The data come from the RNA Mapping Database (RMDB), library OK3TST. This 207-nucleotide RNA was probed chemically with DMS and 2A3. The reactions ran in a buffer of 150 mM KOAc, 10 mM MgCl2 and 150 mM bicine (pH 8.5), at 24 C.

RNA sequence: GGGAACGACUCGAGUAGAGUCGAAAAGAAGGUGGGUCAGGGCUCGGACCGCACCGAUUAGAUGUAACUAUUUCGAGCCCAUUAAUGGCGUUUUCGCCUAGGUCAGAGCACGCCGUGGCUCGACCGAAAUAAAUAAAUAAUAGCACGGCGGAUAGAAAAUGAUUACGUAGUUCGCUACGUAAUCAUUAAAAGAAACAACAACAACAAC
Reactivity to DMS in 0.01 (KOAc 150mM, MgCl2 10mM, bicine 150mM(pH8.5), 24C), signal-to-noise 1, nucleotides 027 to 156: g000a150a090g020g080u010g010g040g020u000c020a090g010g050g060c020u000c030g010g020a010c080c050g010c000a020c020c010g030a300u000u000a100g030a090u020g000u020a150a180c010u000a100u010u000u000c020g000a010g000c000c000c040a140u020u010a030a110u000g010g030c010g020u000u000u010u020c030g020c020c000u010a080g000g020u000c030a160g020a070g000c000a160c040g020c010c020g100u000g000g000c000u010c020g000a020c020c000g010a120a060a070u000a070a060a120u000a080a070a140u010a070a120u000a130g020c000a000c000g030g000c030g020g000a110u000a110g000a130a090
Reactivity to 2A3 in 0.01 (KOAc 150mM, MgCl2 10mM, bicine 150mM(pH8.5), 24C), signal-to-noise 3, nucleotides 027 to 156: g120a060a050g000g000u000g000g010g000u000c030a030g000g020g000c000u000c000g020g000a000c000c040g130c030a000c000c010g000a010u050u130a070g000a030u070g110u190a070a050c050u080a130u150u050u110c010g000a000g000c000c000c000a000u020u100a040a070u050g000g000c000g090u070u020u250u300c020g040c000c010u000a010g000g010u020c090a100g000a000g000c000a000c010g000c000c010g000u010g000g000c000u010c000g000a000c010c000g000a020a030a010u100a000a010a000u050a000a020a020u090a040a020u050a040g030c000a000c010g000g000c110g000g000a060u100a090g070a040a200
Record summary: Values cover nucleotides 27 to 156.